Structure probing data (DMS and 2A3) for a 207-nucleotide construct. The data come from the RNA Mapping Database (RMDB), library OK3TST. 2A3 adducts were read by reverse transcription with SuperScript II with manganese. The 2A3 profile rests on 665 reads. The DMS profile rests on 2,661 reads. The RNA was probed in 150 mM KOAc, 10 mM MgCl2 and 150 mM bicine (pH 8.5) at 24 C.

[RMDB]
RNA sequence: GGGAACGACUCGAGUAGAGUCGAAAAUGGCGUUGCAAAGGCAAUUGCAGACUUUUGUGGACUGGAUUUUGUUGAAUAUUGUGAGGACUAUGUUAAGAAACAUGGGCCACAACAGAGACUUGUUACACCUUCGUUUGUCAAAGGCAUUCAAUGUGUGAAGAGACGAGAGAUUCGUCUCUCGUCUCUUAAAAGAAACAACAACAACAAC
Reactivity to DMS in 0.01 (KOAc 150mM, MgCl2 10mM, bicine 150mM(pH8.5), 24C), signal-to-noise 2, nucleotides 027 to 156: u010g010g030c050g040u020u010g040c000a030a070a160g020g060c030a040a120u000u010g010c120a120g010a090c050u000u000u000u000g000u000g010g000a050c010u000g020g010a140u000u000u000u000g010u000u000g040a100a140u000a110u000u000g090u000g000a190g040g020a040c020u000a050u000g050u030u000a070a220g040a300a070a030c030a010u000g010g030g000c030c000a100c060a050a040c030a060g000a200g000a050c020u000u000g010u000u000a150c070a040c020c040u000u000c030g020u000u000u010g030u010c010a000a050a080g080g020c020a070u000u020c080a060a100u000g010u010g000u000g000
Reactivity to 2A3 in 0.01 (KOAc 150mM, MgCl2 10mM, bicine 150mM(pH8.5), 24C), signal-to-noise 2, nucleotides 027 to 156: u080g090g040c070g010u020u060g000c050a040a090a050g080g000c000a060a090u170u100g030c090a060g050a100c010u010u120u100u050g100u040g040g000a050c030u050g020g010a050u070u080u060u090g030u060u080g080a150a160u130a060u080u050g010u040g040a120g010g050a020c030u020a030u070g010u030u130a230a100g080a120a130a000c000a000u030g000g020g040c000c010a030c010a000a010c000a000g140a000g000a120c020u090u100g020u060u080a000c000a000c000c000u130u120c040g080u020u070u090g060u030c070a140a030a080g070g010c010a000u000u010c050a070a050u060g030u000g010u030g090